An RNA of 207 nucleotides, treated with 2A3 and DMS and read out base by base. For DMS, 1,783 sequencing reads were counted. It was measured as part of the RMDB library M2RFOK. The 2A3 profile rests on 3,764 reads. For DMS the reverse transcriptase was MarathonRT. The reactions ran in a buffer of 150 mM KOAc, 10 mM MgCl2 and 150 mM bicine (pH 8.5), at 24 C.
RNA sequence: GGGAACGACUCGAGUAGAGUCGAAAAACUGCCAUACGUGGCAGAAACACGCCUUACCAGGACUAAACAGCGUGUCUAAAAAGCAGUCCUUCAUACCUGAUCUGGAGGGUAGAUCAGGAAUACUAAAAAAAUCGGGUGAAGUUCGCUUCACCCGAAACAACAGUCAAGAGUUCGCUCUUGACUGUUGAAAAGAAACAACAACAACAAC
Reactivity to 2A3 in 0.01 (KOAc 150mM, MgCl2 10mM, bicine 150mM(pH8.5), 24C), signal-to-noise 4, nucleotides 027 to 156: a000c000u000g000c000c010a020u020a090c160g080u040g000g000c000a000g000a000a020a000c000a000c000g000c000c000u040u030a040c020c050a030g000g010a010c010u070a150a010a040c030a040g000c000g000u010g030u050c090u050a040a030a060a040a000g020c030a000g010u000c020c020u040u100c050a090u080a130c000c000u020g000a010u000c000u030g060g060a080g070g050g040u060a000g000a000u010c010a000g000g040a000a010u090a030c080u130a050a030a020a030a000a030a160u040c010g000g000g000u000g000a000a000g020u060u140c160g040c100u000u000c000a000c000c000c000g000a000a000a000
Reactivity to DMS in 0.01 (KOAc 150mM, MgCl2 10mM, bicine 150mM(pH8.5), 24C), signal-to-noise 1, nucleotides 027 to 156: a110c020u000g000c000c020a040u020a080c180g030u020g000g040c000a010g010a180a110a090c050a000c000g020c000c070u020u020a100c020c080a040g070g020a060c040u000a140a140a040c040a020g060c000g070u020g000u010c040u000a040a110a070a060a130g030c050a050g010u000c010c000u000u000c110a150u010a080c020c000u000g000a050u000c010u000g050g010a170g010g000g010u000a050g020a030u010c030a020g020g000a060a050u000a170c110u010a010a000a040a120a040a120a210u010c000g020g000g020u000g010a020a020g000u000u000c300g030c000u000u000c000a050c000c010c000g030a000a020a020